[RMDB]
RNA sequence: GGGAACGACUCGAGUAGAGUCGAAAAGAUAUGGAGCCAUAUAGGGAGGUCGGUCGGAAACGACCGCCGAGGAUCUAUCUGGCUCCUAAGUCAAAGGGAUAGUCAUAGUUCGCUAUGACUAUCCCAAGUAUUGUAAGCAGUUCGCUGCUUACAAUACAAAAGAAACAACAACAACAAC
Reactivity to DMS in 0.01 (KOAc 150mM, MgCl2 10mM, bicine 150mM(pH8.5), 24C), signal-to-noise 5, nucleotides 027 to 126: g000a030u000a300u000g000g010a010g010c000c000a010u010a020u000a000g000g010g010a050g020g040u010c070g070g000u000c000g010g000a110a080a200c010g010a010c000c010g000c000c000g010a070g000g000a020u010c010u000a000u000c050u000g000g000c000u000c000c000u010a000a050g010u000c030a070a120a160g000g000g010a010u000a000g000u000c000a000u000a000g000u000u010c260g020c010u000a000u000g000a010c000u000a000u000c000c000c000a000a000
Reactivity to 2A3 in 0.01 (KOAc 150mM, MgCl2 10mM, bicine 150mM(pH8.5), 24C), signal-to-noise 3, nucleotides 027 to 126: g040a000u070a040u170g000g000a000g000c000c000a010u020a000u010a020g010g040g010a010g030g010u300c280g010g000u010c000g040g030a090a070a060c010g010a000c010c020g010c010c000g000a050g010g000a010u000c000u000a000u010c020u010g000g000c000u010c000c000u000a020a010g020u000c030a020a070a090g000g000g010a000u010a000g000u000c000a010u000a000g020u040u090c260g040c170u000a000u010g000a000c000u000a000u000c000c000c000a000a000
Description:
This 177-nucleotide RNA was probed chemically with DMS and 2A3. High 2A3 reactivity points to a flexible backbone, as in loops and unpaired stretches. Conditions: 150 mM KOAc, 10 mM MgCl2 and 150 mM bicine (pH 8.5), 24 C.